The data come from the RNA Mapping Database (RMDB), library OK1LIB. An RNA of 177 nucleotides, treated with 2A3 and DMS and read out base by base. The RNA was probed in 150 mM KOAc, 10 mM MgCl2 and 150 mM bicine (pH 8.5) at 24 C. Values are in units of 0.01, from 0 to 300, in steps of 10. High DMS reactivity at an A or C suggests that its Watson-Crick edge is free.
[RMDB]
RNA sequence: GGGAACGACUCGAGUAGAGUCGAAAAGAAAAGAAGGCAAAAGAAACUAGAGAAACAUCACUAUCGGCAGCGUAGAAUGCCCUACGGAUAGGCUAGGAAGAUGAAAAGAAAGCCUUCGAAAGAAAAAGGGUAAUGUACAGUUCGCUGUACAUUACCCAAAAGAAACAACAACAACAAC
Reactivity to 2A3 in 0.01 (KOAc 150mM, MgCl2 10mM, bicine 150mM(pH8.5), 24C), signal-to-noise 2, nucleotides 027 to 126: g210a030a030a040a040g010a000a000g000g000c020a090a000a080a060g120a010a210a040c080u060a030g030a010g020a230a050a040c010a000u000c010a010c060u000a000u000c060g190g000c030a030g000c020g000u030a020g080a170a100u180g110c000c040c000u010a010c080g000g110a130u050a050g090g000c020u000a010g070g060a030a040g050a060u140g040a080a100a000a000g050a020a150a000g010c000c000u000u000c030g000a020a020a000g080a000a030a010a000a000
Reactivity to DMS in 0.01 (KOAc 150mM, MgCl2 10mM, bicine 150mM(pH8.5), 24C), signal-to-noise 2, nucleotides 027 to 126: g010a050a060a080a140g010a040a030g000g060c000a000a010a070a080g010a170a090a080c040u020a050g020a250g000a150a070a130c050a060u000c050a030c040u000a030u000c120g000g000c080a060g060c060g000u030a080g000a070a130u000g040c110c160c030u000a000c100g000g000a030u000a070g000g000c070u010a010g000g070a130a030g010a060u010g000a050a060a000a030g000a130a050a180g010c020c010u000u060c010g000a050a040a110g010a040a040a050a120a070